RNA sequence: GGGAACGACUCGAGUAGAGUCGAAAAGCAGUUCUCGAGUUGCGUUACUCGACCAUAUCGGGGUCAGAUCUCCAGCCACCUGGAGGAGAGGUGAUUACGAGAGUGAUCACACUGACGACGUACUCGCGUAUGUCCUCUCCCGAUGAACUGAACGCAACACUAGCAUCAUCUUCGGAUGAUGCUAGUGAAAAGAAACAACAACAACAAC
Reactivity to DMS in 0.01 (KOAc 150mM, MgCl2 10mM, bicine 150mM(pH8.5), 24C), signal-to-noise 2, nucleotides 027 to 156: g030c010a130g020u010u000c030u000c020g030a150g020u000u000g040c040g010u000u000a090c010u000c010g010a080c030c100a200u000a300u000c010g020g000g010g020u000c010a270g000a110u010c010u000c060c000a060g000c030c110a100c110c010u000g010g010a060g030g000a030g010a060g050g030u000g020a030u020u000a030c000g020a300g020a300g060u000g000a030u000c010a020c030a140c120u010g000a000c070g010a030c030g030u010a010c000u000c270g010c260g000u000a020u030g000u000c000c040u010c000u010c000c000c000g030a140u000g030a070a040c000u030g000a050a090c080g020c040a050a090
Reactivity to 2A3 in 0.01 (KOAc 150mM, MgCl2 10mM, bicine 150mM(pH8.5), 24C), signal-to-noise 1, nucleotides 027 to 156: g020c000a010g000u040u010c020u000c030g000a020g030u020u040g030c050g050u040u040a100c010u000c020g050a030c020c040a060u020a000u140c010g000g000g020g010u000c040a020g000a100u000c000u000c000c000a010g010c000c050a090c040c060u030g000g000a000g010g020a060g000a010g000g040u000g010a010u010u010a010c020g000a000g000a000g030u020g000a010u010c000a000c020a030c030u080g000a000c010g000a000c000g000u000a000c030u020c090g050c030g000u000a010u000g030u000c000c030u030c010u000c000c000c000g000a000u000g000a030a010c010u010g030a050a000c010g010c010a010a070
Record summary:
Chemical mapping of a 207-nucleotide RNA with DMS and 2A3. The reactions ran in a buffer of 150 mM KOAc, 10 mM MgCl2 and 150 mM bicine (pH 8.5), at 24 C. Reactivities are given for positions 27 through 156.